[RMDB]
RNA sequence: GGGAACGACUCGAGUAGAGUCGAAAACUGCGCGUGUUGCAGGAGGGUGGGUGAUGGUCUCGAUCUCUUGUAUUUAGAGAUGGGUUGCCCUUGGUUAGGCAGGUCGUGUAUACUCUGGGGGCGCGUGCGAUAUAUAAAAAUUCGUUUUUAUAUAUCGAAAAGAAACAACAACAACAAC
Reactivity to DMS in 0.01 (KOAc 150mM, MgCl2 10mM, bicine 150mM(pH8.5), 24C), signal-to-noise 5, nucleotides 027 to 126: c050u000g000c030g020c070g020u010g010u020u010g020c090a110g000g000a090g000g000g010u020g000g010g010u010g000a080u010g010g010u010c040u010c040g000a030u000c010u010c010u000u010g010u030a070u040u040u010a020g000a030g000a020u000g000g010g010u030u010g010c040c020c050u010u010g020g010u020u020a130g010g010c050a080g010g010u010c010g020u010g010u010a080u020a010c100u000c050u010g000g000g000g000g000c030g000c040g020u010g010
Reactivity to 2A3 in 0.01 (KOAc 150mM, MgCl2 10mM, bicine 150mM(pH8.5), 24C), signal-to-noise 6, nucleotides 027 to 126: c020u030g020c020g000c010g020u110g040u060u190g020c020a010g000g050a040g030g000g060u120g020g010g020u030g040a090u040g010g030u020c000u020c040g060a030u000c000u000c000u020u080g090u150a190u110u230u080a020g000a000g010a010u040g030g030g000u050u130g010c010c000c000u050u070g080g000u110u050a070g020g020c020a000g000g040u030c000g000u010g020u020a030u010a020c030u020c010u020g020g000g000g000g000c020g000c000g010u010g020

Source: RMDB library OK1LIB, as collected in RNAgym.
Structure probing data (DMS and 2A3) for a 177-nucleotide construct.
The RNA was probed in 150 mM KOAc, 10 mM MgCl2 and 150 mM bicine (pH 8.5) at 24 C.